[RMDB]
RNA sequence: GGGAACGACUCGAGUAGAGUCGAAAAGGAAAUGGACAACCACAAUAUGCAUAAAUCUAACUCCUACCAUCAGCUACACACUGCUUGACAUAUAUUGUUAGAAGCACCUCGCAUUUGUGGGUUCUCUAAUCCAAGAAAUAUUCGUAUUUCUUGGAUUAAAAGAAACAACAACAACAAC
Reactivity to 2A3 in 0.01 (KOAc 150mM, MgCl2 10mM, bicine 150mM(pH8.5), 24C), signal-to-noise 9, nucleotides 027 to 126: g070g030a030a040a070u180g030g030a020c040a080a040c050c010a010c010a010a050u130a020u200g000c020a030u060a160a100a050u040c010u020a000a020c010u040c030c030u040a080c040c020a030u060c020a010g010c030u130a050c100a010c010a010c120u060g020c020u070u130g020a010c060a020u180a020u050a050u150u140g020u010u010a020g010a070a010g050c060a050c030c050u110c100g000c010a010u000u020u010g010u010g010g010g010u010u010c010u000c000u010
Reactivity to DMS in 0.01 (KOAc 150mM, MgCl2 10mM, bicine 150mM(pH8.5), 24C), signal-to-noise 9, nucleotides 027 to 126: g010g000a030a090a130u010g000g010a080c200a100a140c010c010a020c010a020a030u020a020u000g010c020a110u020a060a110a100u000c030u010a030a060c100u010c090c050u010a130c110c050a100u020c060a050g010c040u010a080c150a100c190a080c130u000g000c030u000u000g010a040c080a050u010a080u010a070u000u010g000u010u000a040g000a050a040g010c090a070c150c110u010c110g010c020a030u000u000u000g010u000g000g000g010u000u000c020u000c040u010

Source information: This 177-nucleotide RNA was probed chemically with 2A3 and DMS. DMS adducts were read by reverse transcription with MarathonRT. The data come from the RNA Mapping Database (RMDB), libraries RFM100 and RFMREP.